[RMDB]
RNA sequence: GGGAACGACUCGAGUAGAGUCGAAAAAAACGAGAUCGUGUGGACGCCGCCGUUUGAGGAUCGAAACACUAAAUUGAAUCAAACUAGCUUAUUUCUUGCGUGUCUGUCCGCUGGAGGUAAGUGAAAUUAAAGACCAGACUAAACGUGUAGUGCUGAAUCUCAAGAACUUGUUCGCAAGUUCUUGAGAAAAAGAAACAACAACAACAAC
Reactivity to 2A3 in 0.01 (KOAc 150mM, MgCl2 10mM, bicine 150mM(pH8.5), 24C), signal-to-noise 2, nucleotides 027 to 156: a000a000a000c150g030a060g000a090u160c030g000u010g000u030g010g020a020c050g000c020c010g010c000c070g040u010u010u030g010a010g000g030a020u090c060g040a030a050a020c050a020c080u280a070a000a230u170u190g060a000a020u080c000a000a000a000c000u020a010g010c000u000u010a000u000u060u020c010u010u070g010c000g000u000g010u010c020u030g040u000c000c000g030c020u040g000g010a000g000g000u000a010a000g000u020g010a030a000a000u170u130a060a010a010g010a030c070c090a000g000a010c060u090a070a100a080c060g050u050g010u100a100g030u020g060c040u020g040a070a110
Reactivity to DMS in 0.01 (KOAc 150mM, MgCl2 10mM, bicine 150mM(pH8.5), 24C), signal-to-noise 1, nucleotides 027 to 156: a060a080a090c010g000a180g010a100u020c040g010u010g070u010g070g050a130c040g030c070c010g020c030c090g000u000u000u010g010a010g010g020a110u000c050g020a300a090a160c070a090c030u010a010a040a050u010u010g000a150a070u000c080a060a050a010c070u000a300g000c000u000u000a010u000u000u000c000u010u000g000c030g030u000g020u000c090u000g010u010c050c030g040c020u000g000g010a000g020g010u000a060a050g030u010g020a060a050a110u000u000a050a090a130g000a070c100c030a060g000a040c040u000a020a120a010c080g020u000g010u000a100g030u000g030c000u000g000a040a130
The record gives the reactivity of an RNA of 207 nucleotides to 2A3 and DMS.
Conditions: 150 mM KOAc, 10 mM MgCl2 and 150 mM bicine (pH 8.5), 24 C.
DMS (dimethyl sulfate) methylates the pairing face of unpaired adenines and cytosines.
For DMS the reverse transcriptase was MarathonRT.
For 2A3 the reverse transcriptase was SuperScript II with manganese.
For 2A3, 1,385 sequencing reads were counted.
High 2A3 reactivity points to a flexible backbone, as in loops and unpaired stretches.